[RMDB]
RNA sequence: GGGAACGACUCGAGUAGAGUCGAAAAGUCCUGAAGGUGGUAGUGGCGGUGGUACUAUUGUUGCGACUGGCACACCCGAAGAUAUUGCUCAGACAAAGUCAUCAUAUACAGGAAAGUAUUUAAAAGACCAGUGGGUUACAUUCGUGUAACCCACUGGAAAAGAAACAACAACAACAAC
Reactivity to DMS in 0.01 (KOAc 150mM, MgCl2 10mM, bicine 150mM(pH8.5), 24C), signal-to-noise 1, nucleotides 027 to 126: g020u040c020c000u020g050a070a020g010g050u030g060g000u050a020g060u000g010g010c000g000g100u000g010g040u040a000c000u050a000u040u020g020u060u000g000c020g000a060c030u000g000g060c000a040c070a170c040c060c070g070a070a060g000a090u000a130u030u000g000c080u030c060a110g000a130c020a010a140a250g020u000c030a020u000c000a100u000a040u000a070c000a050g000g000a140a030a080g000u050a060u010u020u030a010a050a090a070g000a090
Reactivity to 2A3 in 0.01 (KOAc 150mM, MgCl2 10mM, bicine 150mM(pH8.5), 24C), signal-to-noise 2, nucleotides 027 to 126: g000u030c000c000u000g140a090a070g090g060u180g000g070u130a230g000u070g080g150c000g000g030u050g010g020u010a020c050u050a040u240u250g140u120u020g000c010g090a010c010u000g220g000c010a000c000a000c030c000c010g010a040a070g030a040u050a050u120u110g060c090u060c190a030g030a130c070a050a050a000g000u000c000a040u010c020a010u070a040u040a300c060a040g110g000a100a000a000g020u070a050u090u210u240a250a120a020a000g020a030